The record gives the reactivity of an RNA of 177 nucleotides to DMS.

RNA sequence: GGGAACGACUCGAGUAGAGUCGAAAAACAUAGUUUGGCCGACGUCAUACCAUUGAAGACGAAUCGUUAAAGACACCAGCUCGUCUUAUAGGAGCCCAUUUAGCAAAAACAGUGCUGUAGGAACCAAGUACAUUCCGGAUUUCGAUCCGGAAUGUACAAAAGAAACAACAACAACAAC
Reactivity to DMS in 0.01 (KOAc 150mM, MgCl2 10mM, bicine 150mM(pH8.5), 24C), signal-to-noise 1, nucleotides 027 to 126: a090c070a120u000a030g000u000u000u000g000g010c000c030g000a110c150g000u010c050a060u040a060c060c010a080u000u000g030a050a140g010a010c040g000a060a140u000c060g030u010u000a080a100a130g000a080c040a140c070c000a050g000c060u030c010g000u020c000u000u020a060u000a020g040g000a100g020c000c010c050a090u000u000u000a120g000c020a030a070a120a230a040c070a040g010u000g070c050u000g030u030a050g000g000a030a140c090c100a030a080